[RMDB]
RNA sequence: GGGAACGACUCGAGUAGAGUCGAAAAAGCAGACCCUGGGCAUCGAGGCCACCGGGGCGCAGUUCUGGUGGAACUUCACCUACCCCGGUUCGCCGGUGCAGGGCGGCAGCACGGUGGCCAACGGCAACGUAUGACGCUCCUUCGGGAGCGUCAUACGAAAAGAAACAACAACAACAAC
Reactivity to 2A3 in 0.01 (KOAc 150mM, MgCl2 10mM, bicine 150mM(pH8.5), 24C), signal-to-noise 2, nucleotides 027 to 126: a000g080c040a030g020a270c030c000c000u030g060g110g000c030a040u150c060g030a040g020g010c010c030a010c030c000g080g010g040g000c050g000c070a010g050u010u030c030u060g000g130u150g060g030a080a080c000u140u160c040a030c040c000u000a000c000c010c010c000g030g000u000u000c070g040c050c000g000g000u030g030c000a020g000g060g000c010g010g040c010a040g010c020a030c030g010g000u050g030g010c040c060a030a040c010g000g050c040a050a050
Reactivity to DMS in 0.01 (KOAc 150mM, MgCl2 10mM, bicine 150mM(pH8.5), 24C), signal-to-noise 1, nucleotides 027 to 126: a160g010c080a130g000a060c080c000c000u010g050g000g000c000a000u140c030g010a290g000g080c010c030a000c000c050g000g000g000g000c140g000c060a140g000u000u050c000u000g000g100u050g120g010a140a080c160u030u140c130a180c130c060u030a130c020c050c000c020g010g000u000u020c060g000c050c040g000g020u000g000c220a010g020g000g000c010g030g000c000a120g110c010a090c000g000g000u000g000g060c050c060a050a300c190g010g000c050a090a110

Conditions: 150 mM KOAc, 10 mM MgCl2 and 150 mM bicine (pH 8.5), 24 C. The record gives the reactivity of an RNA of 177 nucleotides to 2A3 and DMS. Values are in units of 0.01, from 0 to 300, in steps of 10. For DMS the reverse transcriptase was MarathonRT.